[RMDB]
Chemical mapping of a 207-nucleotide RNA with 2A3 and DMS. Conditions: 150 mM KOAc, 10 mM MgCl2 and 150 mM bicine (pH 8.5), 24 C.

RNA sequence: GGGAACGACUCGAGUAGAGUCGAAAAAGGUUGGCUAAGGAGGGAUGAACCGGGCCAGGGGUGAAAACCAGCAGCCAAGAGUUCCCGUGGUAAGCAGUAGUGGGAUAGCGUACCGGAGUGGACUGCCACUAUCAGCCUAGCCAAUUGUUGGACCACAACUACUGAAGUACUUCGGUACUUCAGUAGUAAAAGAAACAACAACAACAAC
Reactivity to 2A3 in 0.01 (KOAc 150mM, MgCl2 10mM, bicine 150mM(pH8.5), 24C), signal-to-noise 2, nucleotides 027 to 156: a000g070g010u010u000g000g000c010u050a060a110g050g010a040g030g070g020a030u110g000a020a020c080c040g020g000g000c010c010a040g040g000g000g000u030g040a050a010a040a040c030c000a010g040c010a000g000c010c040a110a060g060a060g060u020u020c000c000c000g000u010g000g000u050a070a000g000c060a030g000u130a000g040u120g060g060g050a130u120a080g040c040g060u030a110c020c020g020g000a050g030u060g020g040a130c070u100g060c020c020a010c000u040a040u110c050a030g000c030c000u000a000g020c010c040a000a020u020u080g040u030u040g020g050a080c030c000a020c040a060
Reactivity to DMS in 0.01 (KOAc 150mM, MgCl2 10mM, bicine 150mM(pH8.5), 24C), signal-to-noise 1, nucleotides 027 to 156: a070g050g000u000u000g060g020c020u000a040a120g010g020a120g000g000g020a130u000g000a020a110c000c050g030g010g000c000c010a080g020g010g050g000u010g000a140a000a070a070c030c030a030g040c090a160g070c010c010a070a140g010a240g010u010u000c000c010c000g050u010g040g020u000a030a040g000c000a160g010u000a080g010u000g020g040g000a120u000a070g030c060g010u000a070c070c020g020g010a140g010u000g050g000a140c060u000g000c010c020a060c050u020a130u010c080a080g000c020c010u000a040g040c000c030a030a100u000u000g000u010u000g000g010a050c040c050a060c120a170